RNA sequence: GGGAACGACUCGAGUAGAGUCGAAAACCAGCACCGGGCGGUGAUGAAUUGGGACGCAGGCGCGGAGCCCAGGGACCACUCCCCCUGCACAGACAUGAGACCAUAGGGGACCUGUCUGGGUGGCCUCUCCGUCAAUUACAUUCGUGUAAUUGACGGAAAAAGAAACAACAACAACAAC
Reactivity to 2A3 in 0.01 (KOAc 150mM, MgCl2 10mM, bicine 150mM(pH8.5), 24C), signal-to-noise 7, nucleotides 027 to 126: c000c000a010g040c020a020c020c020g030g040g000c050g000g030u040g040a080u070g040a030a150u100u080g030g020g010a010c020g030c050a040g050g050c040g020c030g070g030a040g010c010c010c000a020g030g010g020a030c030c010a020c030u060c010c000c000c010c000u020g030c060a030c010a030g060a010c010a050u200g040a070g040a100c020c010a060u170a130g110g010g000g010a020c000c010u020g020u020c020u020g040g010g010u030g030g010c000c010u020c000
Reactivity to DMS in 0.01 (KOAc 150mM, MgCl2 10mM, bicine 150mM(pH8.5), 24C), signal-to-noise 5, nucleotides 027 to 126: c000c010a120g010c060a060c080c050g010g000g010c030g020g020u000g010a080u030g000a080a120u040u010g000g000g010a080c120g010c050a060g010g000c130g010c060g020g000a120g000c070c040c050a050g000g000g000a100c050c030a130c050u010c050c020c010c020c030u000g000c030a120c040a020g000a040c030a040u030g000a080g010a240c050c020a130u030a120g000g000g000g000a150c060c030u010g000u010c020u020g000g010g010u000g010g000c050c030u010c090